[RMDB]
Description: Conditions: 150 mM KOAc, 10 mM MgCl2 and 150 mM bicine (pH 8.5), 24 C. This 177-nucleotide RNA was probed chemically with DMS and 2A3. For 2A3 the reverse transcriptase was SuperScript II with manganese. Source: RMDB library OK2TST, as collected in RNAgym.

RNA sequence: GGGAACGACUCGAGUAGAGUCGAAAAUCUGCUGUUCCAACAUAUGGCAUGGUAAACUGGAACAAUGAAAAUUUUCCGUUUAAUGAUGUACCUUAUAAAAGCAUUAUUUUGUGGGACGAGGGACUAAGGAAGACAUGUAUUUCGAUACAUGUCUUCCAAAAGAAACAACAACAACAAC
Reactivity to DMS in 0.01 (KOAc 150mM, MgCl2 10mM, bicine 150mM(pH8.5), 24C), signal-to-noise 3, nucleotides 027 to 126: u010c050u000g010c090u010g020u010u000c030c010a080a170c170a060u010a060u010g010g000c030a040u010g000g030u000a030a030a060c050u000g030g000a010a010c260a030a030u000g000a090a080a090a080u000u000u000u000c010c000g000u000u000u000a060a070u010g000a040u000g000u010a080c080c040u010u020a070u020a050a040a080a100g020c050a040u000u000a110u000u000u000u000g020u000g000g010g010a020c060g000a110g000g000g000a160c150u020a070a220
Reactivity to 2A3 in 0.01 (KOAc 150mM, MgCl2 10mM, bicine 150mM(pH8.5), 24C), signal-to-noise 2, nucleotides 027 to 126: u010c020u060g030c020u070g030u040u010c010c010a100a010c030a040u160a070u130g140g000c030a020u070g150g000u080a040a070a030c090u140g000g000a000a050c090a060a050u050g060a040a070a060a040u030u040u000u000c020c000g000u030u030u090a070a040u110g060a030u050g040u080a110c030c030u100u100a190u130a170a150a040a030g000c030a030u050u090a060u030u180u030u060g050u040g040g000g000a020c050g040a040g000g050g020a010c000u060a000a090